[RMDB]
RNA sequence: GGGAACGACUCGAGUAGAGUCGAAAAGAUAUGGAGUGCAUACGCUGUUGACGAUCCGCUCUCGGAAACGAGAGUCGGAUCGAAGGGCGUGCACUCCUAAGUCAAAAUCGGAGAGUUCGCUCUCCGACAUGCAGUCAACGUUCGCGUUGACUGCAUGAAAAGAAACAACAACAACAAC
Reactivity to DMS in 0.01 (KOAc 150mM, MgCl2 10mM, bicine 150mM(pH8.5), 24C), signal-to-noise 3, nucleotides 027 to 126: g000a060u010a300u000g000g000a010g040u000g000c010a080u020a100c140g000c000u000g000u010u030g010a300c110g020a000u000c000c010g000c020u000c010u000c000g000g000a080a050a120c010g010a000g000a030g010u010c020g000g000a000u000c000g010a110a070g000g010g010c000g060u000g010c000a000c000u000c000c000u010a000a060g000u000c040a120a050a140a220u000c000g000g000a010g000a050g000u000u000c200g030c000u000c000u000c000c000g010a020
Reactivity to 2A3 in 0.01 (KOAc 150mM, MgCl2 10mM, bicine 150mM(pH8.5), 24C), signal-to-noise 3, nucleotides 027 to 126: g020a020u040a050u100g000g000a010g040u010g020c030a100u120a300c080g010c030u070g180u300u260g300a220c280g000a000u030c030c030g040c000u000c000u010c000g000g010a030a010a010c000g000a010g010a000g050u180c020g010g030a000u010c010g000a000a000g060g010g000c000g020u000g000c000a000c000u000c010c000u000a010a000g000u000c000a030a020a010a170u040c020g030g000a010g000a010g040u080u220c300g060c140u020c000u030c000c000g000a010
Overview:
An RNA of 177 nucleotides, treated with DMS and 2A3 and read out base by base.